The record gives the reactivity of an RNA of 177 nucleotides to 2A3. 2A3 adducts were read by reverse transcription with SuperScript II with manganese. The reactions ran in a buffer of 150 mM KOAc, 10 mM MgCl2 and 150 mM bicine (pH 8.5), at 24 C. Values cover nucleotides 27 to 126. The data come from the RNA Mapping Database (RMDB), library OK1LIB. For 2A3, 1,030 sequencing reads were counted.
RNA sequence: GGGAACGACUCGAGUAGAGUCGAAAACAAAAAGCUCCUUCCUUCCAAUAACUCUCUCUCUCUCAAUAAGGAAGGAAGGAGCAAGGAAUAAAAGAGAGAGAGAGAGAAAAAGCGGAAACGCGAAAAAGGGUAAUGAUUACUUCGGUAAUCAUUACCCAAAAGAAACAACAACAACAAC
Reactivity to 2A3 in 0.01 (KOAc 150mM, MgCl2 10mM, bicine 150mM(pH8.5), 24C), signal-to-noise 1, nucleotides 027 to 126: c080a010a110a060a010a000g000c000u010c000c010u010u000c000c000u000u000c000c000a080a270u170a270a300c000u110c000u000c000u000c000u030c000u040c020u000c000a230a080u130a070a100g000g000a000a000g000g010a000a000g000g000a000g000c000a000a000g030g000a000a060u130a060a160a060a000g040a000g000a000g000a000g000a000g000a000g040a000g000a000a010a000a000a000g000c000g000g000a030a000a000c020g000c000g050a050a000a000a000a050